[RMDB]
RNA sequence: GGGAACGACUCGAGUAGAGUCGAAAAUUCUGCAGAAUAAUUCCAGUGGUGCUAUCCAUUUGUACAGUUUGAAUGCCCCACUCCAUUAAUCAGGUUGGACUCACUUAUUACCUGUACAGAGUCAAUAAUAUUCUUUAAUCUUCGGAUUAAAGAAUAUAAAAGAAACAACAACAACAAC
Reactivity to DMS in 0.01 (KOAc 150mM, MgCl2 10mM, bicine 150mM(pH8.5), 24C), signal-to-noise 4, nucleotides 027 to 126: u010u010c040u010g020c120a120g010a120a090u000a080a140u010u000c040c040a070g010u000g010g010u010g010c070u010a070u010c060c050a060u000u000u000g000u010a050c090a050g000u000u010u000g010a050a070u000g000c070c060c000c030a060c060u010c060c050a070u010u010a080a100u020c110a050g000g010u000u000g000g000a060c060u010c050a050c110u010u000a080u000u000a080c110c020u000g010u000a040c070a100g000a080g010u000c050a050a080u000a080
Reactivity to 2A3 in 0.01 (KOAc 150mM, MgCl2 10mM, bicine 150mM(pH8.5), 24C), signal-to-noise 2, nucleotides 027 to 126: u050u030c030u060g030c060a010g040a150a070u070a090a040u080u020c030c020a050g020u000g030g030u010g030c020u060a030u060c030c030a070u040u080u110g080u050a050c000a090g010u080u140u070g130a070a030u060g070c000c000c000c000a010c000u040c000c020a090u130u150a070a080u110c030a010g070g040u070u090g110g040a030c000u010c090a010c030u110u060a010u110u120a140c000c030u010g000u000a010c020a080g060a010g010u010c000a000a000u110a070
Chemical mapping of a 177-nucleotide RNA with DMS and 2A3. It was measured as part of the RMDB library OK2TRN. 2A3 adducts were read by reverse transcription with SuperScript II with manganese. The reactions ran in a buffer of 150 mM KOAc, 10 mM MgCl2 and 150 mM bicine (pH 8.5), at 24 C. For DMS the reverse transcriptase was MarathonRT.